[RMDB]
RNA sequence: GGGAACGACUCGAGUAGAGUCGAAAAGCAGCAAUUACCACAUCGUUCGCCAUCAUCUUCUUGCCCUGAGCAACGGUGACGGAGGUCUCCUGAAGCAGGAAUCGUUUCACCGGUAUAUCAGCGAGCGGUGGCCGUUCGGAUUCGUCCGAACGGCCACAAAAGAAACAACAACAACAAC
Reactivity to 2A3 in 0.01 (KOAc 150mM, MgCl2 10mM, bicine 150mM(pH8.5), 24C), signal-to-noise 1, nucleotides 027 to 126: g040c090a000g000c010a000a080u110u040a200c000c000a050c000a040u150c070g020u030u030c080g000c100c030a010u080c000a000u010c100u170u030c030u000u050g060c000c000c000u030g010a100g040c000a000a030c060g060g010u010g000a010c000g050g010a090g030g050u070c090u000c080c000u070g160a180a070g210c090a000g020g000a050a040u000c000g050u020u050u130c000a010c000c000g020g080u040a080u000a000u200c000a010g000c020g140a000g030c000g030